[RMDB]
RNA sequence: GGGAACGACUCGAGUAGAGUCGAAAAGCGAUAUUUCUUUUGAUGCAUUUUCGUUACUCCCUCAUUUAUUGAAAUGGGAAGAAAUUGUUUGGAGCGGUUUCAUCAAUUAUUUGGAUACUGAACACAAGCGGGAUUCCUUGCCUACAGCUGUUUUGUACACGUAAUUAAAUUUCGAUUUAAUUACGUGAAAAGAAACAACAACAACAAC
Reactivity to 2A3 in 0.01 (KOAc 150mM, MgCl2 10mM, bicine 150mM(pH8.5), 24C), signal-to-noise 4, nucleotides 027 to 156: g050c040g040a040u030a080u160u130u090c090u110u190u110u130g050a050u090g030c070a090u040u030u050u100c020g040u030u100a050c040u030c010c000c050u060c030a060u080u130u230a190u060u130g080a070a050a050u070g000g030g030a020a060g030a040a140a030u110u100g060u110u130u080g040g030a040g000c020g040g040u080u140u090c020a030u010c000a030a090u160u130a060u100u220u080g020g000a050u090a060c040u050g070a130a010c060a010c000a100a000g020c070g010g010g020a020u070u000c000c000u020u050g050c010c010u050a050c040a030g050c040u020g010u060u080u080u080g010u080a010
Reactivity to DMS in 0.01 (KOAc 150mM, MgCl2 10mM, bicine 150mM(pH8.5), 24C), signal-to-noise 1, nucleotides 027 to 156: g000c070g020a170u000a050u000u000u010c020u000u010u010u000g010a100u000g010c050a060u000u000u020u000c040g020u010u000a110c030u000c010c010c020u000c040a020u000u000u000a120u020u010g010a040a080a030u010g010g010g000a070a080g010a080a070a110u000u030g000u000u010u000g040g020a130g060c050g040g030u010u000u010c010a030u010c050a080a060u010u010a100u000u000u000g000g000a090u000a060c030u030g010a060a060c060a080c070a010a080g010c070g030g000g000a120u000u000c000c000u000u010g010c000c020u010a090c090a140g030c010u010g010u000u010u000u010g010u000a230
Chemical mapping of a 207-nucleotide RNA with 2A3 and DMS. For DMS, 3,768 sequencing reads were counted. 2A3 adducts were read by reverse transcription with SuperScript II with manganese. Values cover nucleotides 27 to 156. The 2A3 profile rests on 1,805 reads. The RNA was probed in 150 mM KOAc, 10 mM MgCl2 and 150 mM bicine (pH 8.5) at 24 C.